[RMDB]
RNA sequence: GGGAACGACUCGAGUAGAGUCGAAAAUCUGUUUACACGUUAUCGUUAAGUCCAUGUCUGACUACGAUUCCGUAAACAGAAGCCAGUUUGCGUCAAGUCCGACAUGGACUCGUGGCAGAACUGAUCACGUGCAGCUAGUCUUCGGACUAGCUGCACGAAAAGAAACAACAACAACAAC
Reactivity to 2A3 in 0.01 (KOAc 150mM, MgCl2 10mM, bicine 150mM(pH8.5), 24C), signal-to-noise 1, nucleotides 027 to 126: u000c020u000g090u050u080u150a030c030a030c040g060u040u040a140u210c080g000u050u230a110a000g000u000c020c000a030u070g020u000c020u020g010a000c000u050a070c110g040a000u170u020c040c000g020u030a000a000a000c020a030g070a070a000g080c010c000a040g000u020u000u000g070c070g030u040c020a020a010g000u020c010c010g000a070c070a070u030g000g000a020c000u010c030g000u030g020g030c000a030g050a060a030c040u100g000a080u100c090a020
Reactivity to DMS in 0.01 (KOAc 150mM, MgCl2 10mM, bicine 150mM(pH8.5), 24C), signal-to-noise 1, nucleotides 027 to 126: u000c010u000g010u000u010u030a080c080a010c040g010u010u050a070u010c130g010u000u010a090a060g020u000c000c070a020u000g000u010c010u000g020a000c010u000a120c180g020a060u010u000c180c050g030u000a020a000a000c000a050g000a070a090g010c140c080a060g000u000u000u000g020c020g000u030c100a100a020g010u000c030c080g000a100c140a010u000g000g000a000c010u020c010g000u000g000g010c030a110g000a030a080c010u000g000a060u000c110a070